[RMDB]
RNA sequence: GGGAACGACUCGAGUAGAGUCGAAAACGUGAAUACCUCAUACUACCCACAGCUCUUUAUGCCUGUAGGGCGCGUCAAAGACUACGGCUUCUUGAACCUUGCAGGUAGACCCACCCAUAGAGUCCUGAUGUAUGAAUUUCCUACAAAGGCAGGCCAAGCAUUGACUGUGAUUCGUCACAGUCAAUGCAAAAGAAACAACAACAACAAC
Reactivity to 2A3 in 0.01 (KOAc 150mM, MgCl2 10mM, bicine 150mM(pH8.5), 24C), signal-to-noise 1, nucleotides 027 to 156: c070g050u150g040a170a000u140a120c050c000u030c020a020u080a140c080u010a060c000c000c090a050c020a020g000c020u040c000u000u170u070a020u140g000c000c000u000g010u020a080g000g000g000c010g000c040g150u050c020a020a030a020g000a000c070u200a060c080g140g000c140u000u000c040u080u190g050a070a090c040c000u000u040g010c020a010g020g030u000a000g060a000c040c020c000a080c000c080c000a060u090a050g110a000g100u100c000c000u020g040a000u070g010u010a020u000g050a010a000u030u030u090c000c000u040a060c040a080a110a000g030g000c000a030g060g000c010c000a080a000